RNA sequence: GGGAACGACUCGAGUAGAGUCGAAAAGAUAUGGACGUCUUGUCCUGCAGCAAACCCUGUGUCGGAAACGAUGAAAAUGCAGGUCAAGAGCGUCCUAAGUCAAAAGGCUAUUCUUCGGAAUAGCCAACAAAAGUCUAAUGUUCGCAUUAGACUUUUGAAAAGAAACAACAACAACAAC
Reactivity to 2A3 in 0.01 (KOAc 150mM, MgCl2 10mM, bicine 150mM(pH8.5), 24C), signal-to-noise 3, nucleotides 027 to 126: g030a020u070a050u160g000g010a010c010g010u000c000u000u000g000u020c000c010u000g000c000a060g010c050a100a160a300c050c010c050u220g120u050g030u240c010g020g050a110a070a070c030g020a030u100g060a070a130a010a030u030g000c000a010g000g000u000c010a000a010g050a050g100c000g000u000c000c000u010a100a010g040u010c020a000a030a090a160g010g000c000u000a000u020u000c010u040u090c240g000g000a010a010u000a000g010c140c000a000a010
Reactivity to DMS in 0.01 (KOAc 150mM, MgCl2 10mM, bicine 150mM(pH8.5), 24C), signal-to-noise 5, nucleotides 027 to 126: g010a070u010a300u010g010g000a000c000g010u000c010u000u000g000u000c000c000u000g010c010a040g010c220a100a100a160c040c040c040u010g030u010g010u000c010g010g000a140a090a140c020g010a020u000g000a070a030a070a070u000g010c000a000g000g010u000c000a020a010g010a080g010c000g010u000c000c000u000a020a080g000u010c070a050a100a130a100g010g010c000u000a000u000u000c000u000u000c190g030g000a010a000u000a000g000c000c000a010a040
The data come from the RNA Mapping Database (RMDB), library TTRDEL. Chemical mapping of a 177-nucleotide RNA with 2A3 and DMS. 2A3 adducts were read by reverse transcription with SuperScript II with manganese. In probing experiments dimethyl sulfate is read out at A N1 and C N3, which are open when not base-paired. The RNA was probed in 150 mM KOAc, 10 mM MgCl2 and 150 mM bicine (pH 8.5) at 24 C.